[RMDB]
RNA sequence: GGGAACGACUCGAGUAGAGUCGAAAAGAGGGUGGUUUCAGGUAUGAAAUCGACAGGUACUAAAUCAGUGAACAGAGGGGCAAACAACGCUAUCACGGUAAAAAAAAGCGGCAGUUACCAGUAACGAAAUAGUUGACACGUUCGCGUGUCAACUAUUAAAAGAAACAACAACAACAAC
Reactivity to 2A3 in 0.01 (KOAc 150mM, MgCl2 10mM, bicine 150mM(pH8.5), 24C), signal-to-noise 2, nucleotides 027 to 126: g120a020g020g030g030u070g000g020u000u000u010c040a050g050g060u060a140u170g110a060a070a080u080c000g040a000c000a010g030g060u010a020c010u020a020a080a030u060c070a040g080u050g060a040a010c000a020g050a060g100g000g010g010c010a080a000a030c120a160a000c030g000c000u000a000u140c000a000c060g050g020u150a070a040a000a000a000a010a000a000g050c040g000g040c000a020g000u020u000a050c030c000a020g000u020a120a000c020g010a010
Reactivity to DMS in 0.01 (KOAc 150mM, MgCl2 10mM, bicine 150mM(pH8.5), 24C), signal-to-noise 2, nucleotides 027 to 126: g000a060g000g000g010u030g000g020u000u000u020c070a070g000g000u020a050u010g000a060a040a050u000c030g010a110c150a120g020g010u000a060c000u000a010a080a080u000c160a050g020u000g000a040a090c130a050g000a070g000g000g010g010c080a070a120a120c190a110a050c090g000c000u000a070u010c010a030c070g000g000u000a000a000a000a050a100a090a040a020g000c060g000g010c020a040g000u000u010a040c040c010a090g030u000a070a050c140g000a060